[RMDB]
RNA sequence: GGGAACGACUCGAGUAGAGUCGAAAAACGAGAUCGACGCGCGGCAGUACGCGGCGCUCGUCGCCGCCUAUCCCGGCUUCACGCCGGACCUGCGCGACGAAGUGAAUCGCGCGAUGCGCGACGGCAACGUACCCUAUCGCUUCGGCGAUAGGGUACGAAAAGAAACAACAACAACAAC
Reactivity to DMS in 0.01 (KOAc 150mM, MgCl2 10mM, bicine 150mM(pH8.5), 24C), signal-to-noise 1, nucleotides 027 to 126: a060c140g010a110g000a090u000c000g000a130c000g030c000g060c010g020g020c300a140g020u000a030c300g010c010g010g020c030g000c050u000c140g020u050c010g030c030c010g030c020c070u030a090u050c120c020c000g000g000c010u000u000c140a110c190g000c010c010g030g040a000c100c090u030g030c010g020c000g000a040c000g010a030a050g000u000g010a110a070u000c000g000c000g010c000g000a100u010g030c000g010c020g010a070c040g070g000c190a180a090
Reactivity to 2A3 in 0.01 (KOAc 150mM, MgCl2 10mM, bicine 150mM(pH8.5), 24C), signal-to-noise 1, nucleotides 027 to 126: a020c070g010a060g030a160u030c000g000a000c000g050c000g010c010g040g030c060a040g020u040a030c070g010c030g010g000c000g020c030u040c080g080u050c030g040c070c030g060c000c010u120a120u110c050c030c000g000g010c070u200u200c230a040c110g000c000c000g030g000a020c020c030u080g000c000g000c000g020a010c010g000a050a010g020u080g080a090a110u020c040g000c020g020c100g150a130u260g000c000g000c000g040a020c010g090g000c040a050a120